The record gives the reactivity of an RNA of 177 nucleotides to 2A3 and DMS.
It was measured as part of the RMDB library RFMREP.
For 2A3 the reverse transcriptase was SuperScript II with manganese.
The DMS profile rests on 1,805 reads.
RNA sequence: GGGAACGACUCGAGUAGAGUCGAAAAAACAAUUUUAGUUGUCCAGUGUUUGAUUUGUAAAACUGUUUCAAGUACAGGACAAACUGGAGGCAAGGGACAGGACAAAAAAGCUCAGGUUCGCCUGAGCGAGAUAUCGAUGGUUCGCCAUCGAUAUCUCAAAAGAAACAACAACAACAAC
Reactivity to 2A3 in 0.01 (KOAc 150mM, MgCl2 10mM, bicine 150mM(pH8.5), 24C), signal-to-noise 3, nucleotides 027 to 126: a000a000c180a100a110u230u150u130u150a030g040u000u020g000u000c000c010a020g000u000g050u040u010u030g040a060u070u120u170g070u120a120a120a160a190c080u130g080u040u030u040c020a030a000g000u010a010c000a050g010g000a000c000a000a110a000c020u030g020g010a020g040g050c030a010a040g030g020g000a030c030a020g020g020a000c040a000a130a020a030a030a020g000c000u000c010a010g030g050u070u070c160g030c030c000u000g000a000g000c000
Reactivity to DMS in 0.01 (KOAc 150mM, MgCl2 10mM, bicine 150mM(pH8.5), 24C), signal-to-noise 2, nucleotides 027 to 126: a090a050c100a080a080u010u000u000u000a050g010u000u000g000u000c000c010a060g080u000g010u000u000u020g000a010u010u000u000g030u000a060a110a070a130c210u000g010u000u000u000c040a020a030g010u010a000c030a060g010g010a010c050a020a050a050c020u000g010g000a050g010g000c060a040a080g000g010g000a030c070a060g000g000a060c070a030a030a040a090a040a120g010c000u000c000a010g000g010u010u010c220g020c010c010u000g000a020g020c000
The 2A3 profile rests on 1,981 reads.